[RMDB]
RNA sequence: GGGAACGACUCGAGUAGAGUCGAAAAUCGCUAAUGGGACACACAUCCAGGUGCUAUUCCCACAACGCCGCCUGGCACAAAAGUCGAACUCGGCGAAGUAAUCGCCGCGCCAAUCAACGGGGGCACAGCUGAUAUGGUAGUUCGCUACCAUAUCAGCAAAAGAAACAACAACAACAAC
Reactivity to DMS in 0.01 (KOAc 150mM, MgCl2 10mM, bicine 150mM(pH8.5), 24C), signal-to-noise 2, nucleotides 027 to 126: u000c090g010c040u030a160a180u000g020g020g000a060c130a090c110a100c150a070u010c030c030a100g000g000u000g000c040u010a170u000u000c010c000c000a090c200a070a100c170g010c030c020g000c030c030u000g020g020c170a110c130a060a030a130a080g000u000c060g000a040a160c040u020c010g010g000c010g010a020a120g030u010a060a090u010c010g030c000c000g020c160g020c070c030a060a080u030c140a050a050c170g000g000g000g000g000c130a020c200a110
Reactivity to 2A3 in 0.01 (KOAc 150mM, MgCl2 10mM, bicine 150mM(pH8.5), 24C), signal-to-noise 2, nucleotides 027 to 126: u090c030g000c030u040a020a110u060g020g030g050a030c050a010c020a000c020a300u010c030c010a010g030g000u030g020c000u050a090u020u020c000c030c000a020c050a040a020c040g030c010c000g130c040c030u060g000g020c020a000c020a050a120a020a020g080u080c030g070a040a040c040u000c030g000g020c000g020a070a020g100u210a100a180u040c000g000c000c000g010c040g000c030c010a060a150u150c040a000a080c080g010g000g020g000g000c010a010c020a060
An RNA of 177 nucleotides, treated with DMS and 2A3 and read out base by base. 2A3 adducts were read by reverse transcription with SuperScript II with manganese.